[RMDB]
The data come from the RNA Mapping Database (RMDB), library OK3TST.
The record gives the reactivity of an RNA of 207 nucleotides to 2A3 and DMS.
For 2A3, 2,547 sequencing reads were counted.
The DMS profile rests on 7,151 reads.
RNA sequence: GGGAACGACUCGAGUAGAGUCGAAAAACCAAGUGUGGUGGUGCAUGCCUGUAAUCCCAGCUACUUGGGAAGCUGAGACAGGAGAAUUGCUUGAACUUGGGAAGCAGAGGUUGCAAUGAGUCGACAUCAUGCCAUUGCACUCCAGCCUAGGCAACAAAUAAUUAGUAUAUUUCGAUAUACUAAUUAUAAAAGAAACAACAACAACAAC
Reactivity to 2A3 in 0.01 (KOAc 150mM, MgCl2 10mM, bicine 150mM(pH8.5), 24C), signal-to-noise 4, nucleotides 027 to 156: a000c000c000a020a000g020u030g020u030g040g050u040g050g020u040g040c060a050u080g010c010c020u020g010u110a090a110u070c000c020c010a030g040c060u120a100c060u170u100g100g030g040a070a000g000c040u040g010a010g000a040c020a050g020g030a040g090a080a110u060u040g010c030u060u080g030a060a040c000u030u030g030g000g040a040a000g000c050a020g020a020g030g040u150u080g000c000a000a020u010g020a040g140u140c030g080a080c050a140u160c030a040u210g010c000c000a000u000u020g000c000a010c000u010c030c000a030g030c000c030u070a060g020g050c020a070a020c030a070a250
Reactivity to DMS in 0.01 (KOAc 150mM, MgCl2 10mM, bicine 150mM(pH8.5), 24C), signal-to-noise 3, nucleotides 027 to 156: a120c020c010a070a120g010u000g000u010g010g050u000g020g020u000g010c070a040u000g010c030c010u000g010u000a090a110u000c000c010c010a060g020c060u000a040c090u000u000g000g010g010a130a080g000c010u000g010a040g020a100c020a090g010g010a170g010a060a070u000u000g010c010u000u000g000a080a040c040u000u010g010g060g010a070a110g010c040a100g020a060g020g020u000u000g000c020a030a050u000g000a130g030u000c060g030a150c080a100u010c080a090u000g010c020c010a060u000u000g020c020a100c030u000c000c010a120g000c000c020u000a080g010g000c010a060a070c020a060a080